The record gives the reactivity of an RNA of 177 nucleotides to 2A3 and DMS.
RNA sequence: GGGAACGACUCGAGUAGAGUCGAAAAGAAAGGGACCCCUGCCAAGGGACGCAGCCAGUCGACCCCAGGCAUGUUUUUGCAUGCCGGACUGACCCCUACUGCGGGCAGGAGGGGUGGUCCCGAAAGACAUACGAUACUCAUUCGUGAGUAUCGUAUGAAAAGAAACAACAACAACAAC
Reactivity to 2A3 in 0.01 (KOAc 150mM, MgCl2 10mM, bicine 150mM(pH8.5), 24C), signal-to-noise 8, nucleotides 027 to 126: g040a040a040a020g010g000g010a010c020c010c000c010u010g010c020c010a110a130g150g030g010a010c030g000c020a010g040c040c010a010g010u020c010g070a210c010c010c010c010a000g000g000c010a000u000g100u020u230u100u190u300g020c000a000u000g000c000c010g000g000a000c020u030g030a020c010c010c010c010u050a080c030u060g050c070g090g060g010c020a010g000g020a020g000g010g010g020u020g000g000u000c000c000c000g020a040a030a000g040a000
Reactivity to DMS in 0.01 (KOAc 150mM, MgCl2 10mM, bicine 150mM(pH8.5), 24C), signal-to-noise 9, nucleotides 027 to 126: g010a070a110a160g000g010g000a040c020c010c300c010u000g010c020c050a140a140g020g010g020a190c120g010c040a020g010c090c280a040g010u000c010g010a160c090c020c010c060a300g000g000c000a000u000g000u000u010u010u010u020g010c000a000u000g000c000c000g000g000a030c030u000g000a090c010c020c010c020u000a110c040u000g010c070g010g010g020c020a040g000g000a080g010g000g000g020u000g010g000u000c000c000c010g010a050a070a100g010a240

Notes: For 2A3, 28,337 sequencing reads were counted. Conditions: 150 mM KOAc, 10 mM MgCl2 and 150 mM bicine (pH 8.5), 24 C.